[RMDB]
RNA sequence: GGGAACGACUCGAGUAGAGUCGAAAACUGAUUAUGUGAGAGCCAGGACAGGCUAAACAUUUGCUACAUUAAGACCAUGCAUGUGUACCCAGAUGUAGCCCAUUCCCUAGCUCUGGUCUUAUAAAUGGGUCUGAAGACAAUUCGUUGUCUUCAGACCAAAAGAAACAACAACAACAAC
Reactivity to DMS in 0.01 (KOAc 150mM, MgCl2 10mM, bicine 150mM(pH8.5), 24C), signal-to-noise 2, nucleotides 027 to 126: c050u030g000a140u030u040a010u010g000u000g010a080g000a000g000c010c010a080g000g000a120c270a100g030g020c030u000a050a070a060c090a000u010u000u020g000c110u020a020c020a050u000u000a080a080g000a040c040c020a110u000g000c020a030u000g050u000g000u000a020c100c100c040a060g000a120u020g000u000a060g010c060c030c100a170u000u000c080c010c000u040a290g000c050u000c000u000g000g010u010c000u000u000a050u000a040a160a030u010g000
Reactivity to 2A3 in 0.01 (KOAc 150mM, MgCl2 10mM, bicine 150mM(pH8.5), 24C), signal-to-noise 4, nucleotides 027 to 126: c020u040g040a140u090u180a110u150g060u070g060a100g000a000g050c020c010a010g000g100a040c050a090g000g000c000u040a070a090a010c010a020u040u040u080g000c000u000a020c010a070u090u060a110a030g020a020c030c010a050u110g020c040a060u080g070u030g010u140a140c020c040c010a050g030a040u060g020u020a000g010c000c010c010a060u040u030c020c000c000u000a010g000c000u000c000u090g000g030u000c010u060u110a140u090a090a060a060u120g080
About this RNA
Source: RMDB libraries RFM100 and RFMREP, as collected in RNAgym. Structure probing data (DMS and 2A3) for a 177-nucleotide construct. The RNA was probed in 150 mM KOAc, 10 mM MgCl2 and 150 mM bicine (pH 8.5) at 24 C. 2A3 adducts were read by reverse transcription with SuperScript II with manganese. For DMS the reverse transcriptase was MarathonRT.